RNA sequence: GGGAACGACUCGAGUAGAGUCGAAAAUCAUAUGGGAUAUUGUGAUGAAAUUUGGAAAUCUUACCAAGAUAACCCUGAAAUGAUGUCAGUGCAAAGGGUGGUGAAUGAUGUAGCAUAUGAGACCACACCUCCUUCUGACAUUCGUGUCAGAAGGAGGAAAAGAAACAACAACAACAAC
Reactivity to DMS in 0.01 (KOAc 150mM, MgCl2 10mM, bicine 150mM(pH8.5), 24C), signal-to-noise 2, nucleotides 027 to 126: u010c000a030u000a030u000g020g020g000a120u000a040u010u000g020u000g000a030u000g020a060a050a060u000u010u000g020g000a070a190a080u000c120u000u020a130c050c040a020a020g000a180u020a080a080c010c010c020u000g050a060a120a110u030g000a090u000g010u010c060a090g000u010g020c190a070a050a070g020g000g040u000g000g010u010g000a090a040u000g010a070u000g000u020a090g000c050a020u020a050u010g020a100g000a150c010c020a050c270a110
Reactivity to 2A3 in 0.01 (KOAc 150mM, MgCl2 10mM, bicine 150mM(pH8.5), 24C), signal-to-noise 2, nucleotides 027 to 126: u010c010a020u030a040u070g100g080g050a000u010a000u080u150g030u020g040a070u020g040a030a090a090u110u050u040g020g050a090a080a130u060c050u120u020a160c020c010a010a010g020a060u060a030a020c000c000c000u030g170a050a060a070u040g040a020u110g090u170c050a040g070u040g070c050a160a050a000g030g050g010u110g030g050u070g040a000a120u110g020a050u110g010u010a030g040c010a040u050a010u120g020a030g010a030c020c000a040c000a090
Conditions: 150 mM KOAc, 10 mM MgCl2 and 150 mM bicine (pH 8.5), 24 C.
Structure probing data (DMS and 2A3) for a 177-nucleotide construct.
Values are in units of 0.01, from 0 to 300, in steps of 10.